The record gives the reactivity of an RNA of 207 nucleotides to 2A3 and DMS.

RNA sequence: GGGAACGACUCGAGUAGAGUCGAAAAGAGCCUGAAAUUUAAGUCAUACUAUCUAGCUUAAUUUUCGGUCAUUUUUGAUAGUGUAGCCUUGCGUUUGACAAGCGUUGAGGUGAAAUAAGGUCUUAGCCUUGCUUUUGAGUUUUGGAAGAUGAGCGAAGGAGCAUUAAAGGUUCGCCUUUAAUGCUCCAAAAGAAACAACAACAACAAC
Reactivity to 2A3 in 0.01 (KOAc 150mM, MgCl2 10mM, bicine 150mM(pH8.5), 24C), signal-to-noise 4, nucleotides 027 to 156: g060a000g050c000c000u020g020a020a020a020u030u030u000a020a000g020u060c010a010u010a060c000u000a000u020c010u000a020g000c000u000u010a020a010u030u020u040u070c070g050g090u090c120a220u070u170u100u110u180g000a020u000a010g010u010g010u010a020g000c010c000u000u010g000c000g090u050u020u030g020a020c010a020a030g000c010g030u070u300g030a000g000g000u000g010a000a010a000u150a050a040g080g000u000c000u030u120a030g040c000c000u030u100g030c060u040u100u020u150g210a120g060u100u150u140u060g050g010a020a060g030a060u080g040a040g060c030g030a090a060
Reactivity to DMS in 0.01 (KOAc 150mM, MgCl2 10mM, bicine 150mM(pH8.5), 24C), signal-to-noise 1, nucleotides 027 to 156: g000a230g010c020c030u010g070a000a000a040u020u030u000a060a020g020u010c030a240u020a170c050u000a070u000c010u010a300g010c010u000u000a000a010u010u000u000u000c030g020g000u110c110a300u000u020u020u020u010g000a000u000a120g050u000g000u000a230g010c020c000u000u000g020c030g030u000u000u000g030a120c150a170a300g000c040g010u000u020g010a010g000g030u000g000a150a040a100u010a070a090g030g000u010c040u000u000a120g000c020c040u000u030g000c040u000u000u000u000g000a140g010u000u020u000u010g000g000a110a060g010a090u010g010a120g020c050g090a110a230

2A3 adducts were read by reverse transcription with SuperScript II with manganese.